[RMDB]
RNA sequence: GGGAACGACUCGAGUAGAGUCGAAAAGAGAUAAUCACAACUACUGCAGAAAGUAGUCAUAAGCAUGAAGUCUGGAGGGCAAGUGAUAACACUUCACUUUAACAUCGGACAUGUUUUGAGGGACCCAGGUCCAUGACGUAGCCAGACUCUGAGCCAAGUAGGUAGGGUGAUUCGUCACCCUACCUACAAAAGAAACAACAACAACAAC
Reactivity to DMS in 0.01 (KOAc 150mM, MgCl2 10mM, bicine 150mM(pH8.5), 24C), signal-to-noise 1, nucleotides 027 to 156: g020a100g000a120u000a080a120u000c050a120c080a100a110c000u010a040c030u020g000c000a220g000a210a250a020g040u000a010g000u000c020a160u000a110a180g040c110a080u000g000a140a090g030u000c020u000g000g000a090g010g000g090c130a050a030g000u000g000a080u010a140a100c060a050c170u000u000c000a050c020u000u000u000a110a090c010a060u000c050g000g000a090c010a030u000g020u080u000u000u000g020a080g000g060g010a180c060c030c000a040g000g060u000c010c000a160u000g000a060c180g000u010a040g010c030c020a050g050a090c270u000c000u000g000a110g010c050c000a120a270
Reactivity to 2A3 in 0.01 (KOAc 150mM, MgCl2 10mM, bicine 150mM(pH8.5), 24C), signal-to-noise 2, nucleotides 027 to 156: g070a000g000a050u230a090a060u150c060a050c050a060a100c000u020a010c000u030g050c090a060g180a120a160a020g050u040a010g030u040c040a110u140a120a010g030c040a080u050g050a110a000g000u000c000u040g020g060a060g000g080g000c040a000a000g020u000g010a010u090a260a120c110a050c100u070u000c000a010c000u010u010u110a140a030c020a030u030c030g000g000a000c010a010u030g090u010u090u050u060g150a110g020g040g000a030c030c020c020a020g000g080u040c000c010a020u050g010a040c070g030u050a050g050c000c010a000g010a030c100u010c020u000g040a030g060c010c020a090a060